[RMDB]
RNA sequence: GGGAACGACUCGAGUAGAGUCGAAAAUACUACGCGGCCUCCCACCUCUCUGCCCGGAGCCGGCCGCCCGCCCAGAGACCCCGCCGGCUCCCACCGUCGCUUGGUCGACGACCCGCCGCGCCAACAAGAUAUAGUUGUGAUUCGUCACAACUAUAUCAAAAGAAACAACAACAACAAC
Reactivity to DMS in 0.01 (KOAc 150mM, MgCl2 10mM, bicine 150mM(pH8.5), 24C), signal-to-noise 3, nucleotides 027 to 126: u000a120c070u010a070c080g010c040g010g010c020c050u000c020c020c020a120c080c030u000c030u000c030u000g000c070c070c030g000g000a040g000c030c030g000g010c020c110g000c020c030c000g010c040c040c030a140g000a170g000a130c040c030c040c070g010c010c000g000g010c020u000c000c000c100a060c090c030g010u000c020g030c030u000u000g030g020u000c010g000a030c020g010a100c030c050c050g020c030c030g020c050g010c020c050a050a080c120a050a100
Reactivity to 2A3 in 0.01 (KOAc 150mM, MgCl2 10mM, bicine 150mM(pH8.5), 24C), signal-to-noise 1, nucleotides 027 to 126: u030a040c060u020a020c050g000c000g010g030c010c020u000c030c030c000a050c010c010u050c000u010c030u030g060c010c030c030g020g000a020g000c010c000g020g020c010c020g010c000c010c000g080c000c030c020a080g010a020g000a150c020c020c000c000g010c010c020g010g030c000u010c020c000c000a040c040c000g020u020c000g000c010u120u200g100g000u110c010g000a010c000g010a030c000c040c020g020c030c000g010c020g000c020c000a070a070c030a070a030
Overview:
This 177-nucleotide RNA was probed chemically with DMS and 2A3. High 2A3 reactivity points to a flexible backbone, as in loops and unpaired stretches.